[RMDB]
RNA sequence: GGGAACGACUCGAGUAGAGUCGAAAACCACAGCAUCGCCGCGUUGGUUAGUUCAGCUUGGUCUGUGGACAGAUAUCGAACUGGAGAAAACGGUGAAGGCUCGACCUUACGCAAAAUCUCGCGACAAAAACAGCACAGAUUUCGAUCUGUGCUGUUUAAAAGAAACAACAACAACAAC
Reactivity to 2A3 in 0.01 (KOAc 150mM, MgCl2 10mM, bicine 150mM(pH8.5), 24C), signal-to-noise 1, nucleotides 027 to 126: c000c000a030c000a030g030c010a010u100c050g050c110c010g020c000g030u120u110g060g000u070u040a070g020u070u050c030a010g000c020u040u100g060g080u010c030u030g020u080g090g010a010c000a040g070a020u120a040u260c070g020a040a050c070u020g030g010a060g060a030a090a000a010c060g040g030u070g060a080a060g050g000c050u020c080g070a140c030c000u040u150a010c010g010c020a020a000a090a170u080c060u020c030g050c020g050a070c050a000a110
Reactivity to DMS in 0.01 (KOAc 150mM, MgCl2 10mM, bicine 150mM(pH8.5), 24C), signal-to-noise 2, nucleotides 027 to 126: c010c010a130c160a070g000c110a090u010c130g020c040c000g000c080g020u010u000g010g000u010u000a080g000u010u000c020a000g030c040u000u010g020g030u000c020u000g000u010g020g000a190c040a030g000a050u020a080u020c060g040a020a040c050u000g010g020a020g020a050a050a120a080c100g020g000u000g020a040a030g010g030c040u010c210g010a060c010c010u010u020a050c040g020c060a030a070a050a050u010c020u000c040g000c050g000a040c120a080a050

This 177-nucleotide RNA was probed chemically with 2A3 and DMS. Values cover nucleotides 27 to 126. The reactions ran in a buffer of 150 mM KOAc, 10 mM MgCl2 and 150 mM bicine (pH 8.5), at 24 C. For DMS the reverse transcriptase was MarathonRT.